[RMDB]
RNA sequence: GGGAACGACUCGAGUAGAGUCGAAAAUCAGAGAAGAAGGCAAGAAAACACAUGCGGGAGAGAAUCCAGCCCAGAACCAACAUGGGUGUUAAACUAGCACCAUUUCAAGUGUUUUAUGGAUUCGAUGCCAACGUCUCUAAUUCGUUAGAGACGUUGGAAAAGAAACAACAACAACAAC
Reactivity to DMS in 0.01 (KOAc 150mM, MgCl2 10mM, bicine 150mM(pH8.5), 24C), signal-to-noise 4, nucleotides 027 to 126: u000c110a090g000a050g000a060a080g000a050a080g010g010c030a050a070g030a120a060a070a080c050a060c120a060u000g000c100g010g010g000a090g010a180g000a040a010u000c020c020a080g020c040c020c040a100g000a100a090c090c060a070a070c090a050u000g000g020g030u000g000u000u000a040a060a130c250u010a040g000c010a010c010c020a070u000u000u020c180a070a080g000u010g020u000u000u010u020a130u010g020g020a100u000u000c030g010a160u020g000
Reactivity to 2A3 in 0.01 (KOAc 150mM, MgCl2 10mM, bicine 150mM(pH8.5), 24C), signal-to-noise 2, nucleotides 027 to 126: u080c020a030g040a000g000a120a020g020a040a000g000g000c020a040a040g050a100a140a030a000c100a040c030a030u110g040c040g000g030g000a090g010a000g010a070a000u000c020c000a020g050c000c020c010a020g050a060a060c020c010a010a030c010a080u040g090g040g060u000g030u020u140a210a300a080c030u040a010g030c010a010c020c010a080u090u260u190c070a190a010g000u030g060u110u050u070u120a120u050g050g000a030u030u040c020g010a090u230g050